[RMDB]
Conditions: 150 mM KOAc, 10 mM MgCl2 and 150 mM bicine (pH 8.5), 24 C. This 177-nucleotide RNA was probed chemically with DMS and 2A3. It was measured as part of the RMDB library OK1LIB.

RNA sequence: GGGAACGACUCGAGUAGAGUCGAAAACGGGAAUCCGUUCGCCGACGUGGCAGACGUUUCUUCCGAUCACCUCACCGAGGUUUAAAGGCGUCCUUCGCGGCGAAGCAGAUCCUGGGCGGACAGGGCGGCACAUGUCCAUGUUCGCAUGGACAUGUGCAAAAGAAACAACAACAACAAC
Reactivity to DMS in 0.01 (KOAc 150mM, MgCl2 10mM, bicine 150mM(pH8.5), 24C), signal-to-noise 2, nucleotides 027 to 126: c060g000g000g010a050a040u010c050c070g010u000u000c030g000c000c020g010a190c030g010u010g000g040c130a080g010a010c010g000u000u010u060c030u050u040c130c130g010a110u000c250a020c010c030u000c030a150c180c150g010a030g000g000u000u000u030a070a050a050g020g000c000g000u000c000c010u000u000c030g010c000g000g000c000g010a000a050g010c040a120g000a060u000c030c000u010g000g000g020c040g020g020a070c060a070g000g000g020c090g000
Reactivity to 2A3 in 0.01 (KOAc 150mM, MgCl2 10mM, bicine 150mM(pH8.5), 24C), signal-to-noise 4, nucleotides 027 to 126: c000g000g000g030a000a140u000c070c010g060u000u020c000g010c010c030g170a300c030g020u030g020g000c100a110g020a020c010g040u090u110u200c050u090u050c080c060g060a140u160c100a020c020c000u000c040a300c110c270g020a020g070g000u030u090u150a090a160a040g020g000c010g010u020c000c000u020u050c020g020c030g000g010c000g000a000a020g080c030a020g000a020u030c000c010u070g030g010g020c020g020g010a040c000a040g010g000g040c050g040
For DMS, 2,796 sequencing reads were counted.